[RMDB]
RNA sequence: GGGAACGACUCGAGUAGAGUCGAAAAGACUGAACAUAGUGUGGGUAGCACAAGAUAAACAUGGGUCGUGAGCUCUGAUAACCAUUUCCAUUAAGUUGAAAAUCUUAUCAUCUACUUCUACACCAGGACGCAUACGGAGCUUCGGCUCCGUAUGCGUAAAAGAAACAACAACAACAAC
Reactivity to 2A3 in 0.01 (KOAc 150mM, MgCl2 10mM, bicine 150mM(pH8.5), 24C), signal-to-noise 1, nucleotides 027 to 126: g000a000c090u060g030a210a000c000a070u190a300g020u020g000u020g130g140g120u160a090g140c000a000c030a090a090g070a030u280a100a170a000c020a100u000g240g000g000u060c000g030u170g010a170g000c000u030c000u000g030a070u000a000a050c040c050a000u000u000u000c000c000a000u170u260a050a050g300u100u100g050a030a030a120a110u000c090u030u000a000u170c070a000u120c000u000a090c040u150u170c000u000a000c050a140c000c000a000g190g000